[RMDB]
RNA sequence: GGGAACGACUCGAGUAGAGUCGAAAAGACCUCCACCUUUUAUUAUUACAGUCAAUUUAUCACUAUCAUUUUUCAUCAUUAAUCCCAUUAUAGAUGUGGCUGUUAAUGUUCUUCCAAGUGCUGCUGUACCCAGUGCAUCAUUCGUGAUGCACUGGGUAAAAGAAACAACAACAACAAC
Reactivity to 2A3 in 0.01 (KOAc 150mM, MgCl2 10mM, bicine 150mM(pH8.5), 24C), signal-to-noise 3, nucleotides 027 to 126: g020a020c000c010u060c040c010a060c030c020u000u160u070u030a090u040u020a030u010u150a040c050a050g080u020c040a140a170u050u170u200a080u170c060a060c050u080a120u160c080a130u100u050u010u090u120c020a050u000c000a010u020u060a060a060u040c030c010c030a060u140u110a030u110a120g160a080u100g040u040g170g000c010u020g050u060u060a020a000u080g020u040u010c000u070u000c000c010a150a110g050u050g070c100u020g010c000u000g020u080